[RMDB]
RNA sequence: GGGAACGACUCGAGUAGAGUCGAAAAGUCUAUUCGUAGACAAUUUUGAUAUGGAACGGAAUGUGGGAGACUCGGGUGGGAUCGGAAACGAUCCCAUCUCUAGCGUGGUCGAGGAUCACAUACCCGUUCCUAAGUCGCCACGCUGCUUCGGCAGCAAUGUUCAAGGUGUAUUCGUACACCUUGAACAAAAAGAAACAACAACAACAAC
Reactivity to 2A3 in 0.01 (KOAc 150mM, MgCl2 10mM, bicine 150mM(pH8.5), 24C), signal-to-noise 2, nucleotides 027 to 156: g000u000c000u000a020u080u110c220g120u080a010g010a010c010a050a040u130u160u230u230g040a020u020a020u120g000g000a020a000c000g000g000a010a020u010g010u010g000g000g000a030g010a020c000u000c030g010g000g000u000g000g000g000a000u000c010g000g040a050a050a020c020g000a000u000c000c000c000a010u000c000u000c020u010a070g070c070g120u260g030g000u030c030g000a150g030g020a000u000c000a000c010a010u080a150c010c030c000g000u000u000c000c000u000a010a000g000u000c020g020c070c030a090c140g020c000u000g000c000u030u050c160g120g000c000a010g000c020a020a060
The record gives the reactivity of an RNA of 207 nucleotides to 2A3. Conditions: 150 mM KOAc, 10 mM MgCl2 and 150 mM bicine (pH 8.5), 24 C. Source: RMDB library RNAMAK, as collected in RNAgym. Values are in units of 0.01, from 0 to 300, in steps of 10.